[RMDB]
RNA sequence: GGGAACGACUCGAGUAGAGUCGAAAAGCGUGCGUGUUCGCACGCACGCAAAGCGGCCAGCUCCAGGCCGCCAAAGAAUAUGGAGCACAAAUGUCAGCAAAAAAAGAAUGGUGUUCGCACCAUUCAAGAACACUGUAAGGUUCGCCUUACAGUGUUCAAAAGAAACAACAACAACAAC
Reactivity to 2A3 in 0.01 (KOAc 150mM, MgCl2 10mM, bicine 150mM(pH8.5), 24C), signal-to-noise 2, nucleotides 027 to 126: g000c000g010u000g000c040g000u030g030u060u140c180g020c130a000c010g010c000a000c010g000c000a070a020a000g000c000g000g000c000c000a040g010c000u000c000c000a000g000g000c000c030g010c000c020a100a190a010g120a080a000u030a020u020g000g000a000g150c000a000c000a000a040a030u230g060u120c040a030g040c100a140a060a030a030a010a020a020g000a020a000u000g020g020u010g040u040u090c160g010c050a010c010c000a010u010u010c000a000a010
Reactivity to DMS in 0.01 (KOAc 150mM, MgCl2 10mM, bicine 150mM(pH8.5), 24C), signal-to-noise 2, nucleotides 027 to 126: g000c000g010u010g000c000g080u000g010u000u000c280g030c010a020c000g000c000a000c000g020c000a040a070a130g010c000g000g020c000c000a180g020c010u000c010c010a040g000g010c010c000g000c010c160a020a090a050g000a020a020u000a080u000g000g010a020g040c000a100c210a040a020a070u010g030u000c200a050g020c160a000a010a020a050a050a100a150g000a000a010u000g000g000u000g030u000u010c220g000c000a000c000c000a000u000u000c000a070a130